[RMDB]
RNA sequence: GGGAACGACUCGAGUAGAGUCGAAAACGCUGGGCCUUUGACCUGUUUGCAUCGAUCUACUGAAGCGCGCACGGUAGGGAGCAAACCUGUAAAGGCCUGUGCUGAAGCGCGCACGGCAACCGAAAGGUGCGGAUAUUGACGGAUUCGUCCGUCAAAAAACCUAAGAACGAUUCGUCGUUCUUAGGUUAAAAGAAACAACAACAACAAC
Reactivity to DMS in 0.01 (KOAc 150mM, MgCl2 10mM, bicine 150mM(pH8.5), 24C), signal-to-noise 2, nucleotides 027 to 156: c030g030c020u010g000g020g020c000c010u000u000u020g020a140c240c100u000g020u000u000u010g010c000a300u000c100g000a070u010c010u010a010c020u000g000a040a030g040c010g050c010g030c000a300c000g000g000u000a050g000g000g010a060g000c010a040a020a030c000c150u020g020u010a020a050a030g000g020c010c010u000g010u000g000c000u000g000a040a070g020c010g040c040g000c000a300c000g000g000c010a080a060c030c000g020a130a080a100g030g050u000g010c040g010g000a110u000a140u000u000g000a030c000g000g020a060u000u010c260g010u000c010c000g000u020c020a010a000a000a090
Reactivity to 2A3 in 0.01 (KOAc 150mM, MgCl2 10mM, bicine 150mM(pH8.5), 24C), signal-to-noise 3, nucleotides 027 to 156: c010g000c000u030g020g010g000c000c020u050u010u020g120a200c090c140u150g040u010u000u000g030c060a080u300c050g000a000u000c000u010a000c010u040g020a200a090g020c010g000c000g010c000a010c000g000g000u010a000g000g000g020a010g000c000a000a010a030c050c050u230g110u300a040a010a020g000g000c030c000u000g010u000g000c010u030g010a110a040g000c000g000c000g000c000a000c000g000g010c000a000a000c000c000g040a070a010a040g010g000u010g010c010g020g010a060u060a170u140u070g010a000c000g000g000a010u040u100c140g050u030c050c000g000u000c060a000a000a020a010
An RNA of 207 nucleotides, treated with DMS and 2A3 and read out base by base. For 2A3 the reverse transcriptase was SuperScript II with manganese. The RNA was probed in 150 mM KOAc, 10 mM MgCl2 and 150 mM bicine (pH 8.5) at 24 C. The DMS profile rests on 3,877 reads. Values cover nucleotides 27 to 156. For 2A3, 2,711 sequencing reads were counted.